[RMDB]
RNA sequence: GGGAACGACUCGAGUAGAGUCGAAAACAAGGGCUAAACACCCUCGCCCCGAAGCAAGUAAGAUAGAGAAAAAGCGGUUCUCGGGAGCUUCAGUUGUUUCCACCGGGUAGUAGCCGAAGCGACAGCGGAGGCCUAGGAAGUUCGCUUCCUAGGCCUCAAAAGAAACAACAACAACAAC
Reactivity to DMS in 0.01 (KOAc 150mM, MgCl2 10mM, bicine 150mM(pH8.5), 24C), signal-to-noise 3, nucleotides 027 to 126: c080a130a010g000g000g010c020u010a110a130a140c250a260c000c000c000u000c080g000c070c010c020c080g040a080a080g010c070a040a100g010u010a080a090g000a070u000a030g010a100g000a040a060a100a140a120g000c080g020g000u000u000c020u000c040g010g000g010a130g010c030u000u000c050a040g020u000u000g010u000u000u000c010c050a110c140c060g000g020g010u000a060g000u000a110g030c020c010g010a040a070g010c030g020a070c130a090g010c120g010
Reactivity to 2A3 in 0.01 (KOAc 150mM, MgCl2 10mM, bicine 150mM(pH8.5), 24C), signal-to-noise 2, nucleotides 027 to 126: c010a020a040g010g010g000c000u080a030a030a020c040a060c010c040c000u000c060g050c010c000c010c010g030a030a030g010c060a120a000g050u170a120a020g020a240u250a070g090a040g080a040a100a060a090a000g100c090g060g060u100u000c040u000c030g020g020g020a030g030c000u110u060c010a030g000u020u050g000u030u020u020c000c010a050c030c010g030g050g000u080a070g030u050a020g050c030c010g000a000a010g040c010g070a030c020a030g020c020g080